[RMDB]
RNA sequence: GGGAACGACUCGAGUAGAGUCGAAAAGACACGACGGAGACGUCGUGUCAAAGAGUGGGAAACCACUCAAAGAGCCACAGCUUCGGCUGUGGCUCAAGGCGUGGCACCGUCCACGGACCAAACGGAAUGCUAUUAGCACUUUCGAGUGCUAAUAGCAAAAAGAAACAACAACAACAAC
Reactivity to 2A3 in 0.01 (KOAc 150mM, MgCl2 10mM, bicine 150mM(pH8.5), 24C), signal-to-noise 1, nucleotides 027 to 126: g000a000c000a000c010g010a000c000g040g020a080g020a050c010g000u010c010g000u010g000u000c000a010a000a000g000a000g000u000g010g030g000a010a040a030c000c000a010c000u000c000a030a020a000g000a000g010c000c010a000c000a040g070c010u090u150c250g120g000c010u000g000u000g000g000c000u000c000a020a000g010g020c000g000u000g000g020c040a020c180c010g090u130c000c040a000c050g030g210a060c020c010a040a050a000c010g000g050a110a050
Reactivity to DMS in 0.01 (KOAc 150mM, MgCl2 10mM, bicine 150mM(pH8.5), 24C), signal-to-noise 2, nucleotides 027 to 126: g000a000c000a000c020g000a010c010g000g000a270g020a280c000g000u000c000g020u010g000u000c000a000a010a070g000a020g030u020g010g010g000a160a100a180c000c000a040c000u000c010a030a070a110g000a020g000c000c000a000c000a000g000c000u000u000c200g000g020c000u040g040u000g000g010c020u000c000a010a100g000g000c040g040u000g000g020c000a160c010c030g000u020c010c000a010c000g000g000a100c180c050a010a020a000c020g000g010a120a110